An RNA of 207 nucleotides, treated with 2A3 and DMS and read out base by base. The RNA was probed in 150 mM KOAc, 10 mM MgCl2 and 150 mM bicine (pH 8.5) at 24 C. 2A3 adducts were read by reverse transcription with SuperScript II with manganese. Values cover nucleotides 27 to 156.

[RMDB]
RNA sequence: GGGAACGACUCGAGUAGAGUCGAAAAGUCUGUGCGUUUCCAUUUGAGUAUCCUGAAAACGGGCUUUUCCGCAUGGAACGUACAUAUUAAAUAGUAGGAGUGCAUAGUGGCCCGUAUAGCAGGCAUUGAGGCGAGGAUUGUUUCGACAAUCCUCGAACCCAGUCAUUUAGUUCGCUAAAUGACUGGGAAAAGAAACAACAACAACAAC
Reactivity to 2A3 in 0.01 (KOAc 150mM, MgCl2 10mM, bicine 150mM(pH8.5), 24C), signal-to-noise 4, nucleotides 027 to 156: g070u050c080u060g020u020g040c010g010u000u150u050c020c020a060u130u090u090g060a060g040u070a090u120c000c000u030g060a010a040a050a090c040g020g020g000c010u140u120u070u040c070c010g080c080a050u040g010g010a020a010c010g020u040a000c010a000u070a030u020u170a040a080a090u150a030g110u010a060g010g070a030g010u070g060c050a050u070a180g120u070g030g000c020c010c000g020u020a030u090a030g010c030a010g050g000c040a040u050u140g080a050g090g060c000g010a000g000g020a000u000u000g060u010u080u070c080g090a010c010a000a000u000c000c000u010c000g000a000a000
Reactivity to DMS in 0.01 (KOAc 150mM, MgCl2 10mM, bicine 150mM(pH8.5), 24C), signal-to-noise 2, nucleotides 027 to 156: g040u000c030u020g040u000g030c030g020u000u000u020c010c010a100u010u000u010g000a160g010u000a130u000c030c000u000g060a060a090a170a100c050g020g020g070c070u000u000u000u000c050c050g030c090a080u000g000g000a020a080c080g010u000a120c040a060u000a120u010u000a070a060a190u000a140g010u010a110g020g000a140g020u010g000c020a140u000a110g060u000g010g000c000c000c000g030u000a060u010a130g030c030a000g020g000c100a130u000u010g000a150g000g020c020g000a030g030g020a040u000u030g020u010u000u010c250g010a080c000a020a000u010c000c000u000c000g000a030a070